An RNA of 177 nucleotides, treated with DMS and 2A3 and read out base by base.
Reactivities are given for positions 27 through 126.
The data come from the RNA Mapping Database (RMDB), library OK1LIB.
As a SHAPE reagent, 2A3 marks flexible, mostly unpaired nucleotides at the ribose 2'-OH.
The reactions ran in a buffer of 150 mM KOAc, 10 mM MgCl2 and 150 mM bicine (pH 8.5), at 24 C.

RNA sequence: GGGAACGACUCGAGUAGAGUCGAAAACAGACUUACAAGGCUCCAUCUAUGCCUAAUUAUAAGAAGCCUCUCAAUGUCAAUGUUAGGAAUAUCAAUGUUAAGACGGUAUGGAAGGACACUGGAGGUGGCCCGAAUGGUGAUUCGUCACCAUUCGGGCAAAAGAAACAACAACAACAAC
Reactivity to DMS in 0.01 (KOAc 150mM, MgCl2 10mM, bicine 150mM(pH8.5), 24C), signal-to-noise 2, nucleotides 027 to 126: c040a060g010a090c030u020u040a040c210a060a060g000g060c070u000c070c040a020u040c070u000a020u010g000c000c000u030a100a100u070u000a100u010a110a170g000a080a220g000c010c000u100c000u000c010a010a150u010g030u000c080a150a040u000g030u000u000a160g000g000a100a000u000a000u000c140a060a180u010g000u040u060a080a130g050a140c070g020g000u000a000u000g010g000a080a130g010g000a060c020a090c030u000g000g000a000g020g060u010g050
Reactivity to 2A3 in 0.01 (KOAc 150mM, MgCl2 10mM, bicine 150mM(pH8.5), 24C), signal-to-noise 4, nucleotides 027 to 126: c020a030g140a060c030u080u110a030c060a090a070g070g030c030u050c030c000a080u000c040u060a050u030g000c000c000u070a110a110u120u070a030u020a140a020g140a090a010g010c010c000u010c010u020c010a080a080u150g180u210c030a080a090u160g080u110u100a030g040g140a090a080u110a040u150c130a030a050u100g090u200u150a050a000g080a030c070g000g000u050a000u030g120g020a000a040g060g000a020c030a020c060u000g010g010a020g000g000u010g090